[RMDB]
Chemical mapping of a 207-nucleotide RNA with DMS and 2A3. For 2A3, 1,120 sequencing reads were counted. For 2A3 the reverse transcriptase was SuperScript II with manganese.
RNA sequence: GGGAACGACUCGAGUAGAGUCGAAAAAGUGCACACGGCCGGUACAGUGAAACUGCGAAUGGCUCAUUAAAUCAGUUAUGGUUCCUUUGAUCGCUCCACCCGGUUACUUGGAUAACUGUGGCAAUUCCAGAGCUAAUACAUGCCAACGAGCGCCGACGUAAGAGACGAAGUUCGCUUCGUCUCUUACAAAAGAAACAACAACAACAAC
Reactivity to DMS in 0.01 (KOAc 150mM, MgCl2 10mM, bicine 150mM(pH8.5), 24C), signal-to-noise 1, nucleotides 027 to 156: a060g000u010g000c040a070c070a120c050g040g020c020c000g040g080u000a040c070a160g000u000g010a120a050a160c050u010g010c020g030a120a110u000g030g030c000u000c050a120u000u000a040a070a150u010c060a100g000u010u000a050u000g020g040u020u000c010c010u000u010u000g000a100u020c030g080c030u000c020c010a100c030c000c010g020g000u000u000a040c070u010u020g050g010a070u000a020a000c000u000g030u000g000g000c040a080a150u000u030c040c050a120g000a080g010c010u000a070a110u000a020c050a120u000g000c000c000a050a040c030g000a110g030c000g000c050c010g020a120c140
Reactivity to 2A3 in 0.01 (KOAc 150mM, MgCl2 10mM, bicine 150mM(pH8.5), 24C), signal-to-noise 2, nucleotides 027 to 156: a000g090u060g000c050a010c010a010c070g020g000c020c010g030g010u080a060c050a040g000u010g150a130a100a050c050u050g040c040g070a030a020u080g010g000c020u000c050a010u030u170a050a100a130u080c010a010g020u010u060a050u090g170g000u050u090c000c000u040u020u090g040a050u070c010g000c080u080c060c050a040c030c000c000g020g000u080u040a030c050u120u140g080g010a090u050a090a000c010u040g010u070g070g000c040a030a040u080u010c010c010a010g010a010g040c010u000a020a040u080a120c040a050u150g000c000c000a070a050c070g030a050g050c000g040c020c010g040a030c050